RNA sequence: GGGAACGACUCGAGUAGAGUCGAAAACUUGCAAGGUUCGCCUUGCAAGAAAUAAAAGCUCACCAACCAACAAAAAUAAGACCAUGGAUGGAAAAAGAAUAAAAACAGCAGUGUUCGCACUGCUGAACGAUGUAGAAAUGUUCGCAUUUCUACAUCGAAAAGAAACAACAACAACAAC
Reactivity to DMS in 0.01 (KOAc 150mM, MgCl2 10mM, bicine 150mM(pH8.5), 24C), signal-to-noise 2, nucleotides 027 to 126: c000u000u020g000c000a040a020g000g010u000u000c140g000c000c000u010u000g000c000a010a010g000a060a100a060u000a080a070a170a150g010c070u000c070a120c040c050a070a100c070c020a040a150c060a010a080a110a060a120u010a060a090g010a120c070c050a000u000g000g000a100u000g000g020a070a060a070a090a140g000a080a060u020a030a050a060a050a230c010a010g000c010a020g000u000g010u000u000c170g020c010a000c010u000g000c000u000g010a020a060
Reactivity to 2A3 in 0.01 (KOAc 150mM, MgCl2 10mM, bicine 150mM(pH8.5), 24C), signal-to-noise 3, nucleotides 027 to 126: c000u000u000g010c010a010a000g040g010u060u060c130g060c060c000u000u000g000c010a000a010g010a010a010a000u050a000a060a000a010g040c020u010c050a070c000c010a020a060c010c020a010a080c020a040a200a120a080a060u130a210a040g040a030c050c030a050u080g030g020a020u010g040g070a060a120a020a040a090g080a050a100u140a130a140a030a010a020c000a000g000c000a000g000u000g020u040u060c100g030c070a000c000u010g000c000u000g000a000a000